An RNA of 177 nucleotides, treated with DMS and read out base by base. Conditions: 150 mM KOAc, 10 mM MgCl2 and 150 mM bicine (pH 8.5), 24 C.
RNA sequence: GGGAACGACUCGAGUAGAGUCGAAAAAGAUAUGGAUCACUUAGGGAAGCUCAUACCAGCAUCGAUCUUGCCGUCGGAAACGACGGUCAAGGGAGCUGAAUGAGCUUCCCUAAGUGAUCCUAAGUCACGUAAAAUAGAUGUUCGCAUCUAUUUUACGAAAAGAAACAACAACAACAAC
Reactivity to DMS in 0.01 (KOAc 150mM, MgCl2 10mM, bicine 150mM(pH8.5), 24C), signal-to-noise 4, nucleotides 027 to 126: a090g000a040u010a300u000g000g000a000u000c000a010c000u000u000a010g000g010g010a020a010g000c000u000c010a020u000a130c300c020a010g000c000a300u000c190g010a060u000c000u000u000g000c000c000g030u000c000g000g000a150a070a250c020g010a000c000g000g000u020c020a010a010g000g000g010a030g020c000u000g010a080a020u000g000a010g010c000u000u000c000c000c000u000a000a010g000u000g010a000u000c000c000u000a010a080g000u000c050a300